[RMDB]
This 177-nucleotide RNA was probed chemically with DMS and 2A3. DMS adducts were read by reverse transcription with MarathonRT. Conditions: 150 mM KOAc, 10 mM MgCl2 and 150 mM bicine (pH 8.5), 24 C. In probing experiments dimethyl sulfate is read out at A N1 and C N3, which are open when not base-paired. Values cover nucleotides 27 to 126. For DMS, 6,640 sequencing reads were counted.
RNA sequence: GGGAACGACUCGAGUAGAGUCGAAAAUGAUGUCAUGGCACGGGUGAUCGGCUUCCAUCUCAAUCGUGGGGUGUUGGCAGCCGCGCGCCGGGUGCCGGAGCCGAGCGUUGCUCAGGUGGUCGCCGGGACUUUGUGCGAUUUUCGAAUCGCACAAAGUAAAAGAAACAACAACAACAAC
Reactivity to DMS in 0.01 (KOAc 150mM, MgCl2 10mM, bicine 150mM(pH8.5), 24C), signal-to-noise 3, nucleotides 027 to 126: u000g010a070u010g010u010c060a110u010g020g000c010a030c000g010g000g010u000g010a040u000c010g010g010c010u000u000c000c010a020u010c010u000c020a070a120u010c250g010u010g010g010g010g020u010g000u010u010g020g010c120a030g010c000c000g010c120g010c040g010c040c000g000g040g050u000g000c000c010g010g000a140g010c000c020g000a100g000c050g000u000u000g010c080u000c030a060g020g020u000g000g020u000c020g020c020c010g000g010g010
Reactivity to 2A3 in 0.01 (KOAc 150mM, MgCl2 10mM, bicine 150mM(pH8.5), 24C), signal-to-noise 1, nucleotides 027 to 126: u140g020a030u130g020u130c090a110u080g040g010c070a000c000g070g000g000u030g030a110u050c000g000g000c000u020u000c000c000a050u030c050u020c000a180a210u120c070g250u130g020g060g010g010u070g050u110u150g040g050c010a020g010c000c000g000c020g050c010g010c020c040g040g120g030u010g000c000c000g000g020a010g000c010c010g040a020g000c050g090u030u260g000c030u060c090a040g050g000u030g000g000u040c030g000c050c000g010g000g000